[RMDB]
RNA sequence: GGGAACGACUCGAGUAGAGUCGAAAAAGCCAAUAAUAACUGGCAAAGAAAAACAAAACCUAGCUUUCGCUGCCUAAUAAGCAGUAGCAUAGCUGAUCCUCCGUGCAUCGCCCAUGUGCUACGGUAAGGGUCUCACUCUAAGUGGGCUACACUAGUUACACCAAAUGAAGUUCGCUUCAUUUGGUGUAAAAGAAACAACAACAACAAC
Reactivity to 2A3 in 0.01 (KOAc 150mM, MgCl2 10mM, bicine 150mM(pH8.5), 24C), signal-to-noise 4, nucleotides 027 to 156: a010g010c020c030a020a010u230a100a040u120a090a100c090u070g010g000c030a020a060a090g060a060a110a020a020a010c090a010a110a040a000c050c070u070a030g000c010u020u030u010c010g000c010u010g000c010c010u080a100a040u230a240a020g000c000a000g020u040a050g030c060a030u030a010g000c000u020g000a020u000c000c000u000c000c000g000u000g000c010a000u000c030g020c010c000c000a000u010g020u000g000c050u100a010c000g010g030u050a090a110g000g000g020u020c070u050c070a110c020u140c010u080a080a050g010u010g000g000g020c040u090a020c060a030c090u080a030g080u020u010

This 207-nucleotide RNA was probed chemically with 2A3. 2A3 adducts were read by reverse transcription with SuperScript II with manganese. The reactions ran in a buffer of 150 mM KOAc, 10 mM MgCl2 and 150 mM bicine (pH 8.5), at 24 C.